[RMDB]
RNA sequence: GGGAACGACUCGAGUAGAGUCGAAAACGCUACGCGGUUUGCCCCCUGUCGAUCGCACAUAUUGCUUCGACGGGUUCUCCCGCUGCGCCUUCGCCGCUGAGACCGGGAUCGCUCUAUACUCACUGCACAAAUAGCUACCCUUCGGGGUAGCUAUUUGAAAAGAAACAACAACAACAAC
Reactivity to 2A3 in 0.01 (KOAc 150mM, MgCl2 10mM, bicine 150mM(pH8.5), 24C), signal-to-noise 1, nucleotides 027 to 126: c020g030c100u140a040c140g000c000g170g050u080u110u140g020c010c040c010c000c000u020g000u010c010g020a040u020c070g040c170a020c030a190u300a180u120u270g040c030u000u000c010g010a030c030g000g000g000u050u020c020u000c000c000c030g000c030u040g000c000g070c000c000u070u080c090g020c030c000g040c010u040g050a000g000a090c020c020g040g030g000a070u070c040g000c000u000c020u060a100u050a070c010u040c060a040c090u130g030c060a020
Reactivity to DMS in 0.01 (KOAc 150mM, MgCl2 10mM, bicine 150mM(pH8.5), 24C), signal-to-noise 2, nucleotides 027 to 126: c080g000c030u000a080c190g010c020g020g010u020u000u010g010c050c110c060c040c040u000g010u000c010g000a000u000c230g010c030a040c300a200u000a130u000u000g000c020u000u000c000g000a020c000g000g010g020u000u010c050u000c090c020c000g030c040u000g010c050g020c040c050u000u000c040g010c040c040g020c050u010g010a140g000a090c020c030g000g010g000a080u000c040g020c000u000c040u010a080u000a090c130u000c030a090c060u000g000c130a210
The data come from the RNA Mapping Database (RMDB), library OK2TRN. This 177-nucleotide RNA was probed chemically with 2A3 and DMS. Reactivities are rounded to 0.1 and cut off at 0 and 3. In probing experiments dimethyl sulfate is read out at A N1 and C N3, which are open when not base-paired.